[RMDB]
Structure probing data (2A3) for a 177-nucleotide construct. For 2A3 the reverse transcriptase was SuperScript II with manganese. It was measured as part of the RMDB library M2PK50. Values cover nucleotides 27 to 126. For 2A3, 1,407 sequencing reads were counted. The RNA was probed in 150 mM KOAc, 10 mM MgCl2 and 150 mM bicine (pH 8.5) at 24 C.
RNA sequence: GGGAACGACUCGAGUAGAGUCGAAAAGCCGUAAGCUUCGGCUUACGGCAAACCUGACCAGCUAUGAGGUCAUACAUCGUCAUAGCACAAAAAUAAAAAUAAAAAGUGCUGUCUUCGGACAGCACAACCCUCAUCUUAGGUUCGCCUAAGAUGAGGGAAAAGAAACAACAACAACAAC
Reactivity to 2A3 in 0.01 (KOAc 150mM, MgCl2 10mM, bicine 150mM(pH8.5), 24C), signal-to-noise 1, nucleotides 027 to 126: g000c000c010g000u000a010a000g000c000u020u190c290g080g000c000u000u020a000c010g010g000c000a000a010a010c000c000u000g010a000c000c000a000g000c000u010a000u010g000a000g000g000u020c000a000u150a110c060a110u180c160g020u000c000a010u010a010g240c010a020c000a020a010a020a020a000u300a070a080a010a000a010u200a030a100a000a010a030g000u000g020c000u000g000u000c010u030u110c250g060g000a000c000a000g000c000a000c000a000a000